[RMDB]
RNA sequence: GGGAACGACUCGAGUAGAGUCGAAAACGGCCGCUGCCGCUGUGGCGGCGGCCGCCGCGGCCGCAGCGGAAAGCGAGGCGGAGGAGCCGGUGUUAAGCAGAGACGAGGACUCGGAGGAGGACGCAGAAACUAUACAAGCGUUCGCGCUUGUAUAGUUAAAAGAAACAACAACAACAAC
Reactivity to DMS in 0.01 (KOAc 150mM, MgCl2 10mM, bicine 150mM(pH8.5), 24C), signal-to-noise 1, nucleotides 027 to 126: c060g040g020c010c040g060c020u000g080c010c040g000c260u000g040u000g000g040c020g000g080c000g010g000c120c080g020c010c010g040c070g040g060c030c070g020c020a070g020c010g000g000a050a070a080g010c040g000a090g000g030c070g010g000a110g000g030a110g010c090c060g040g030u000g020u000u000a090a110g010c100a090g000a100g020a110c060g040a100g010g020a080c040u000c080g040g000a090g000g000a030g010g010a070c110g000c080a140g010a170
Annotation:
Chemical mapping of a 177-nucleotide RNA with DMS. DMS adducts were read by reverse transcription with MarathonRT. It was measured as part of the RMDB library OK2TRN.